The record gives the reactivity of an RNA of 177 nucleotides to DMS and 2A3. The RNA was probed in 150 mM KOAc, 10 mM MgCl2 and 150 mM bicine (pH 8.5) at 24 C. For DMS, 3,089 sequencing reads were counted. For DMS the reverse transcriptase was MarathonRT. 2A3 adducts were read by reverse transcription with SuperScript II with manganese.
RNA sequence: GGGAACGACUCGAGUAGAGUCGAAAAGGUUAUUAGAUAGUAAGAUACUUGGGGCGUUUAACACAGUGAUAGCUUUGUUGGGAUCAAUCAUCAUCAUUGUGAUGAAUAUCAUGAUAAUUCAAAAUUAGAUAACUUCUUCUUUCGAGAAGAAGUUAUCAAAAGAAACAACAACAACAAC
Reactivity to DMS in 0.01 (KOAc 150mM, MgCl2 10mM, bicine 150mM(pH8.5), 24C), signal-to-noise 3, nucleotides 027 to 126: g010g010u000u000a050u000u000a090g020a110u000a060g020u000a080a090g010a120u010a030c050u000u000g010g020g030g010c070g010u000u000u010a040a080c060a030c070a060g030u000g000a060u000a080g000c080u000u000u010g010u000u000g010g010g000a060u000c110a050a060u000c070a050u010c040a040u000c100a090u000u010g020u010g010a030u000g000a060a060u010a060u010c060a070u000g000a060u000a070a060u000u010c040a050a050a050a100u010u010a130
Reactivity to 2A3 in 0.01 (KOAc 150mM, MgCl2 10mM, bicine 150mM(pH8.5), 24C), signal-to-noise 1, nucleotides 027 to 126: g060g010u060u040a040u030u080a160g060a140u040a040g060u030a140a000g010a110u040a070c050u040u040g050g000g000g000c070g030u020u090u080a090a030c050a010c010a040g030u000g070a110u030a090g040c030u060u000u060g060u050u050g030g000g060a020u040c020a030a060u000c000a040u000c020a000u030c030a110u120u300g030u050g010a020u020g040a050a050u070a030u080c040a020u090g040a030u040a120a050u180u030c040a080a000a000a110u090u000a030